[RMDB]
An RNA of 207 nucleotides, treated with 2A3 and DMS and read out base by base.
RNA sequence: GGGAACGACUCGAGUAGAGUCGAAAAUGUUUUAACUCAGUAGGAACCCAGCUGAUCGUUCCGAAAGCAGCUUUUAAGAGAAGCUGAUGUCCUGUGAACACGUUAGCAAGCUGUCAUUGUGACUUUGUCAGCAGGCUUAUCUCAGAGCAUCUGCAGAUAACCAGACAUCAUUCGUGAUGUCUGGUUAAAAAGAAACAACAACAACAAC
Reactivity to 2A3 in 0.01 (KOAc 150mM, MgCl2 10mM, bicine 150mM(pH8.5), 24C), signal-to-noise 3, nucleotides 027 to 156: u090g020u010u130u020u110a080a040c020u000c050a030g010u050a040g070g030a010a020c030c020c000a050g010c040u040g040a150u100c070g010u040u010c040c030g080a030a040a010g000c030a000g000c000u060u160u050u110a130a010g120a010g020a130a030g000c010u020g030a050u050g040u040c010c000u040g010u020g070a080a030c050a040c210g030u060u060a010g050c040a080a030g000c030u020g010u020c010a050u110u040g080u110g140a130c060u040u060u090g070u040c020a000g020c010a030g150g000c020u060u070a050u090c020u040c050a030g000a000g030c010a060u080c040u050g020c060a050g030a090
Reactivity to DMS in 0.01 (KOAc 150mM, MgCl2 10mM, bicine 150mM(pH8.5), 24C), signal-to-noise 3, nucleotides 027 to 156: u020g000u000u020u000u000a070a140c050u000c040a110g010u000a110g030g000a070a130c030c020c020a210g030c040u000g020a050u000c080g000u000u000c010c010g000a080a070a060g010c000a030g000c010u010u000u000u010a110a250g030a270g020a050a070g020c000u000g020a020u010g010u000c000c030u000g020u000g020a070a090c050a040c070g020u000u000a060g000c050a120a120g020c000u000g040u000c020a240u010u000g010u010g000a250c040u000u000u000g010u010c020a140g030c010a090g010g000c020u010u010a060u000c130u010c130a130g020a040g000c000a040u000c040u000g010c040a120g020a190
2A3 adducts were read by reverse transcription with SuperScript II with manganese. The DMS profile rests on 5,855 reads. It was measured as part of the RMDB library OK3TST.